[RMDB]
RNA sequence: GGGAACGACUCGAGUAGAGUCGAAAAUGAAUUAUUCGUGGUUUUAUCGAUUCGGCAUAGUGGCGAUAACUGAAUGUCGGAUCGGUACUGCGGGUGUUUAAACGCACCGUAAAUAAGAAGUAGUAUUUUAUCUACGAAAUUUCGAUUUCGUAGAUAAAAAAGAAACAACAACAACAAC
Reactivity to DMS in 0.01 (KOAc 150mM, MgCl2 10mM, bicine 150mM(pH8.5), 24C), signal-to-noise 3, nucleotides 027 to 126: u010g010a150a130u010u000a010u000u000c010g040u000g010g000u000u040u010u010a000u000c010g000a010u000u000c010g030g010c010a010u000a070g010u020g000g030c210g010a130u020a060a090c030u010g000a090a020u000g010u000c000g030g000a000u010c000g010g010u000a010c010u000g010c000g000g010g010u000g010u000u010u020a060a080a130c300g010c030a020c010c000g000u000a030a020a030u010a040a030g000a090a150g010u000a080g020u010a090u000u000
Reactivity to 2A3 in 0.01 (KOAc 150mM, MgCl2 10mM, bicine 150mM(pH8.5), 24C), signal-to-noise 4, nucleotides 027 to 126: u080g050a020a060u160u040a030u070u070c010g000u020g080g010u040u160u080u130a020u010c010g000a000u000u000c010g010g020c000a000u010a060g090u020g060g120c150g130a070u130a250a100c000u020g130a130a040u010g000u000c000g000g030a000u000c010g000g000u000a000c000u000g000c000g030g000g010u010g010u060u060u100a110a160a020c060g000c020a010c010c020g070u110a000a160a000u140a060a040g080a060a010g050u090a010g020u030a080u010u000

Notes
The record gives the reactivity of an RNA of 177 nucleotides to DMS and 2A3. The reactions ran in a buffer of 150 mM KOAc, 10 mM MgCl2 and 150 mM bicine (pH 8.5), at 24 C. For DMS the reverse transcriptase was MarathonRT. It was measured as part of the RMDB libraries RFM100 and RFMREP. For 2A3 the reverse transcriptase was SuperScript II with manganese.